[RMDB]
RNA sequence: GGGAACGACUCGAGUAGAGUCGAAAAGAUAUGGAUCCUACCAUCAUCGAUCCGCAGAGCUGGCGCAUUUCUCUUCGGAAACGAAGAGAUUCAACCAGCUCUGCGGGGAGAUGAUGGAUCCUAAGUCGACUACAGUAUAGUUCGCUAUACUGUAGUCAAAAGAAACAACAACAACAAC
Reactivity to 2A3 in 0.01 (KOAc 150mM, MgCl2 10mM, bicine 150mM(pH8.5), 24C), signal-to-noise 5, nucleotides 027 to 126: g080a070u220a100u300g070g020a030u070c040c050u130a200c100c050a050u030c010a000u020c000g020a020u030c000c000g000c000a010g010a000g000c010u010g020g000c050g020c130a080u050u110u000c000u000c000u010u010c010g040g040a180a090a050c010g000a000a010g010a000g000a010u020u030c000a010a020c000c000a000g000c010u000c000u000g000c000g000g000g000g010a000g000a000u000g000a000u000g000g000a000u000c000c000u050a150a040g130u120c090
Reactivity to DMS in 0.01 (KOAc 150mM, MgCl2 10mM, bicine 150mM(pH8.5), 24C), signal-to-noise 7, nucleotides 027 to 126: g020a080u000a260u010g000g020a060u000c050c070u010a300c080c060a130u000c000a010u000c010g010a300u020c010c010g000c000a000g000a010g000c000u000g000g010c060g000c230a300u000u000u000c000u000c000u000u000c000g010g000a120a060a260c010g010a010a000g010a010g000a000u000u000c260a240a090c000c000a010g010c000u000c000u000g010c010g000g000g000g000a300g010a010u000g000a000u000g000g010a010u000c010c010u010a090a170g010u010c140

This 177-nucleotide RNA was probed chemically with 2A3 and DMS. The RNA was probed in 150 mM KOAc, 10 mM MgCl2 and 150 mM bicine (pH 8.5) at 24 C. For 2A3, 23,223 sequencing reads were counted. Reactivities are given for positions 27 through 126. For 2A3 the reverse transcriptase was SuperScript II with manganese. For DMS the reverse transcriptase was MarathonRT.